[RMDB]
The record gives the reactivity of an RNA of 177 nucleotides to 2A3 and DMS.
RNA sequence: GGGAACGACUCGAGUAGAGUCGAAAAGCGCGCUACAAUGGGCGGGACAAUGGGACCCGACCCCGAAAGGGGAAGGGAAUCCCCUAAACCCGCCCUCAGUUCGGAUCGCGGGCUGCAACUCGCCCGCACCUCGAUCUAAAUUCGUUUAGAUCGAGGUAAAAGAAACAACAACAACAAC
Reactivity to 2A3 in 0.01 (KOAc 150mM, MgCl2 10mM, bicine 150mM(pH8.5), 24C), signal-to-noise 9, nucleotides 027 to 126: g070c040g000c010g020c060u080a050c090a110a180u130g000g000g010c000g000g000g010a040c080a090a130u120g010g020g020a040c000c000c000g010a010c000c010c000c000g030a040a010a040g000g000g000g000a000a010g010g000g010a000a100u050c000c000c000c000u050a130a110a050c000c000c000g000c000c000c000u000c000a000g000u020u060c030g050g030a110u120c080g000c010g010g000g000c010u070g020c060a090a070c050u040c110g000c000c000c010g000c000
Reactivity to DMS in 0.01 (KOAc 150mM, MgCl2 10mM, bicine 150mM(pH8.5), 24C), signal-to-noise 8, nucleotides 027 to 126: g000c050g010c050g020c050u020a080c170a090a110u010g010g010g010c000g000g010g010a060c130a090a170u020g010g000g000a080c000c010c000g010a300c000c000c000c000g000a060a110a150g020g000g010g010a010a300g000g000g000a040a060u010c050c000c000c090u000a030a150a090c010c000c000g000c000c000c000u010c050a070g020u010u000c040g000g000a110u010c100g010c000g000g010g010c010u010g000c140a090a080c190u030c110g000c000c000c010g000c010
Conditions: 150 mM KOAc, 10 mM MgCl2 and 150 mM bicine (pH 8.5), 24 C.